[RMDB]
RNA sequence: GGGAACGACUCGAGUAGAGUCGAAAAAGCGGCGAUCACGUCGUGAUUCCGAACGACGCCGGCGCAACCUUCGGCAUUCACAUGGAGCGUCACGCGCCGCACGGCCACCCCGAAAAGUGGGCCGUCACGCAUCUUGCGUCCGGCAUGGCGGCCGGCGCAAGUCGAACCCUUUCGAGGGUUCGACUUGAAAAGAAACAACAACAACAAC
Reactivity to 2A3 in 0.01 (KOAc 150mM, MgCl2 10mM, bicine 150mM(pH8.5), 24C), signal-to-noise 3, nucleotides 027 to 156: a010g010c010g020g010c030g040a090u200c150a070c190g040u040c040g000u000g040a090u090u040c000c020g030a060a030c060g050a020c050g050c030c050g010g020c010g010c040a150a200c010c030u060u070c010g100g000c080a180u150u160c010a060c060a150u230g110g000a090g010c050g000u020c020a020c110g040c010g000c000c010g000c010a010c010g000g000c030c010a040c040c040c040c080g100a100a080a030a010g090u120g000g040g030c020c000g000u020c020a030c040g070c010a140u090c060u090u090g020c000g030u080c030c000g010g000c040a040u130g110g020c060g010g000c000c000g000g000c000g000
Reactivity to DMS in 0.01 (KOAc 150mM, MgCl2 10mM, bicine 150mM(pH8.5), 24C), signal-to-noise 1, nucleotides 027 to 156: a080g060c050g000g010c010g020a140u000c080a050c030g090u000c020g010u010g000a080u000u000c000c030g000a120a110c000g020a040c040g040c030c030g010g040c090g010c040a080a050c040c010u000u000c010g010g020c090a140u010u010c000a090c050a170u000g030g020a300g060c040g020u000c020a040c130g020c010g050c010c000g020c040a050c000g030g000c010c020a040c020c020c010c040g010a110a070a060a170g030u010g000g060g040c000c010g000u000c100a040c030g020c030a120u010c080u000u000g010c030g010u030c000c010g020g000c010a060u000g030g020c070g040g000c010c000g060g000c020g030
This 207-nucleotide RNA was probed chemically with 2A3 and DMS. The 2A3 profile rests on 1,547 reads. Conditions: 150 mM KOAc, 10 mM MgCl2 and 150 mM bicine (pH 8.5), 24 C. Source: RMDB library OK3TST, as collected in RNAgym. For 2A3 the reverse transcriptase was SuperScript II with manganese. Reactivities are rounded to 0.1 and cut off at 0 and 3.